[RMDB]
RNA sequence: GGGAACGACUCGAGUAGAGUCGAAAACAGAAAGAGGAAUCUUACAUCCUUUCUGCAGAACUUGGAGAAAAGUGUGAAGACAUAGGCAAGAAGCUAUUGUACUUGGAAGAUCAACUUCACACAGCAAUCCACAGUCAUGAUGAAGAUCUCAUUCAGAAUACUAGGCGAGUUUCGACUCGCCUAGUAUAAAAGAAACAACAACAACAAC
Reactivity to 2A3 in 0.01 (KOAc 150mM, MgCl2 10mM, bicine 150mM(pH8.5), 24C), signal-to-noise 2, nucleotides 027 to 156: c050a040g110a030a120a010g030a090g020g070a150a100u030c000u010u090a130c000a030u000c000c030u010u020u060c020u030g000c050a030g020a170a120c050u090u040g040g000a020g050a000a090a110a090g010u000g000u000g020a000a000g000a020c020a170u150a030g030g080c030a070a050g060a140a080g070c050u090a110u190u170g050u030a220c000u030u050g040g050a110a010g020a160u220c090a040a000c000u010u010c000a020c000a000c000a000g000c020a000a090u000c000c000a010c000a050g050u000c010a010u050g040a010u010g020a010a030g000a010u000c000u000c020a030u150u100c030a000g050a090
Reactivity to DMS in 0.01 (KOAc 150mM, MgCl2 10mM, bicine 150mM(pH8.5), 24C), signal-to-noise 1, nucleotides 027 to 156: c000a010g010a010a030a060g040a160g040g080a070a090u010c050u000u000a030c010a160u010c050c030u000u000u000c010u010g010c020a170g000a050a130c000u010u000g030g000a070g010a130a130a260a180g020u000g020u020g000a040a090g060a060c080a120u000a060g000g000c020a050a190g000a220a140g020c040u000a060u000u000g040u000a150c060u010u000g020g010a140a150g000a100u000c000a070a120c000u000u020c040a070c000a090c000a040g000c100a020a150u000c000c000a080c060a020g010u000c090a110u000g020a110u000g020a010a190g010a050u010c040u000c040a100u000u020c120a020g050a220